[RMDB]
RNA sequence: GGGAACGACUCGAGUAGAGUCGAAAAGUGCCUCGUCGGUCCGGCAUGCCAACCUGAUCCGAAGUUCAAGGUGGUUUCUCUGGCCUUCCAGAGAGAUGCGCGUCGGAAGAACCGACGAACAAACCUUAAAACAAAACGACGUUCGCGUCGUUUUGAACGACGUAUUAACGUUCGCGUUAAUACGUCGAAAAGAAACAACAACAACAAC
Reactivity to DMS in 0.01 (KOAc 150mM, MgCl2 10mM, bicine 150mM(pH8.5), 24C), signal-to-noise 2, nucleotides 027 to 156: g020u000g010c050c020u000c000g010u000c010g000g000u000c000c010g000g050c040a060u010g020c010c120a050a030c040c030u000g000a100u010c100c080g040a170a150g010u000u010c010a050a030g010g020u000g030g000u000u000u000c000u000c000u010g000g010c190c160u000u000c000c000a000g010a030g010a020g010a030u010g040c000g070c030g040u000c030g000g020a100a110g010a220a150c000c000g010a000c000g010a010a060c050a050a060a150c010c010u010u000a060a110a140a220c000a010a000a040a020c020g000a060c000g040u000u010c270g010c020g060u000c000g010u000u000u000u000g000a060a200
Reactivity to 2A3 in 0.01 (KOAc 150mM, MgCl2 10mM, bicine 150mM(pH8.5), 24C), signal-to-noise 5, nucleotides 027 to 156: g080u050g070c010c010u030c000g000u010c000g000g000u000c000c000g020g020c020a030u080g010c020c010a080a080c020c010u030g020a050u080c060c150g190a200a100g050u080u070c100a100a020g000g010u010g010g000u030u090u010c000u000c000u010g020g010c020c060u300u200c030c000a010g000a000g000a000g010a050u130g020c050g010c020g060u020c000g020g010a030a030g020a060a020c000c000g000a000c000g000a030a010c020a010a090a040c030c050u200u290a050a120a010a030c010a000a010a000a000c000g000a000c010g020u040u100c230g020c000g100u000c000g000u000u000u000u000g000a020a010

The data come from the RNA Mapping Database (RMDB), library M2RFPK. This 207-nucleotide RNA was probed chemically with DMS and 2A3. The reactions ran in a buffer of 150 mM KOAc, 10 mM MgCl2 and 150 mM bicine (pH 8.5), at 24 C. Values cover nucleotides 27 to 156. DMS adducts were read by reverse transcription with MarathonRT.